[RMDB]
RNA sequence: GGGAACGACUCGAGUAGAGUCGAAAACGCCAUCCACCGCGACUGGGGUGCGCGCUACACCUGGCCGCGCUUCGUGUGCGCGCUGCCCAAGGAGUUCUUCGCCGCGGUGCGCGCCGAACUGGCCAAGGAUACGCGGGCUAUUCGUAGCCCGCGUAUCAAAAGAAACAACAACAACAAC
Reactivity to DMS in 0.01 (KOAc 150mM, MgCl2 10mM, bicine 150mM(pH8.5), 24C), signal-to-noise 1, nucleotides 027 to 126: c100g000c020c030a050u010c060c010a070c130c020g020c050g000a120c120u010g000g000g000g020u010g010c090g010c020g000c050u010a070c100a070c000c040u000g000g000c000c080g020c200g010c140u000u000c110g000u000g000u000g000c010g000c010g010c020u000g020c040c040c040a050a030g000g010a190g010u000u000c050u030u000c100g040c080c130g010c010g000g010u000g000c060g020c040g040c010c000g010a050a110c080u010g020g000c000c090a060a060g000
Reactivity to 2A3 in 0.01 (KOAc 150mM, MgCl2 10mM, bicine 150mM(pH8.5), 24C), signal-to-noise 1, nucleotides 027 to 126: c020g030c000c010a030u060c050c020a080c000c020g060c030g110a110c050u060g010g010g000g020u020g000c110g030c030g000c030u050a010c000a010c010c020u000g000g000c040c030g140c080g020c170u020u020c040g130u080g010u010g060c010g000c010g020c000u070g050c040c000c010a050a010g100g010a130g030u210u080c030u090u130c080g050c010c010g000c010g020g010u020g020c110g050c010g000c000c000g000a100a030c010u100g030g000c010c040a040a030g140